The record gives the reactivity of an RNA of 177 nucleotides to DMS and 2A3. For 2A3 the reverse transcriptase was SuperScript II with manganese. DMS adducts were read by reverse transcription with MarathonRT. Conditions: 150 mM KOAc, 10 mM MgCl2 and 150 mM bicine (pH 8.5), 24 C. The DMS profile rests on 2,310 reads.
RNA sequence: GGGAACGACUCGAGUAGAGUCGAAAAGAUAUGGACUCGUGUCUUUCAACAGCUGGUGGUCGGAAACGACCAUCCAGACAUGAAAGCACGAGUCCUAAGUCAAAAGUCGAGGGUUCGCCCUCGACAACAACCUCCUCUAGUUCGCUAGAGGAGGUUGAAAAGAAACAACAACAACAAC
Reactivity to DMS in 0.01 (KOAc 150mM, MgCl2 10mM, bicine 150mM(pH8.5), 24C), signal-to-noise 2, nucleotides 027 to 126: g000a020u010a210u010g000g010a050c020u000c010g010u000g000u050c010u000u010u000c000a080a070c240a220g020c000u000g000g030u000g010g010u000c000g020g000a040a050a100c010g000a020c000c000a000u010c020c020a000g020a010c080a300u010g010a020a010a030g000c010a000c000g000a020g010u010c000c000u000a000a050g000u000c010a100a090a150a140g010u000c010g010a010g010g000g010u000u010c300g010c010c000c000u000c000g000a010c020a040a150
Reactivity to 2A3 in 0.01 (KOAc 150mM, MgCl2 10mM, bicine 150mM(pH8.5), 24C), signal-to-noise 1, nucleotides 027 to 126: g000a010u040a010u070g000g010a000c000u020c000g010u030g170u090c090u020u030u060c190a300a140c120a110g070c000u000g030g010u020g020g020u000c010g000g000a030a000a040c030g030a010c010c000a030u030c010c000a010g020a010c020a300u300g010a020a050a000g000c000a000c000g000a000g010u030c010c000u000a000a000g000u020c010a000a010a080a060g010u020c000g000a010g010g010g030u030u160c280g230c040c000c000u000c000g020a010c000a000a010